RNA sequence: GGGAACGACUCGAGUAGAGUCGAAAAUAUGCACGCCGGUGCAGGUGAGUACGCGUGUAUGGUGUUCGUGACUCCCACGAGCUUUUCGUUGUCGCGCGCUGUUUCAAGAGUCGCGCUGCGCCACCGAAGUCUCUGUUGGAUUCGUCCAGCAGGGGCUAAAAGAAACAACAACAACAAC
Reactivity to DMS in 0.01 (KOAc 150mM, MgCl2 10mM, bicine 150mM(pH8.5), 24C), signal-to-noise 9, nucleotides 027 to 126: u030a000u010g010c000a010c020g010c030c260g020g030u020g010c030a090g000g020u040g010a160g010u020a070c130g010c010g000u010g010u010a020u000g010g020u020g010u000u000c020g000u000g000a140c100u020c050c060c010a010c000g000a000g000c000u000u000u000u000c000g000u000u000g000u000c000g000c000g000c000g000c020u010g010u000u020u030c180a110a120g000a090g010u020c100g000c020g010c010u020g020c010g000c030c010a060c050c010g010a090
Reactivity to 2A3 in 0.01 (KOAc 150mM, MgCl2 10mM, bicine 150mM(pH8.5), 24C), signal-to-noise 9, nucleotides 027 to 126: u130a000u010g020c000a000c010g020c020c060g130g000u020g000c000a010g080g150u190g060a140g010u050a010c010g000c000g000u010g000u000a020u010g060g020u050g010u010u010c010g000u010g030a040c010u010c020c010c000a000c000g000a000g010c000u020u020u010u010c010g000u000u020g010u010c000g000c000g000c000g000c010u030g050u040u090u080c070a070a040g030a020g080u100c020g000c000g000c010u010g000c000g000c000c010a040c010c010g020a020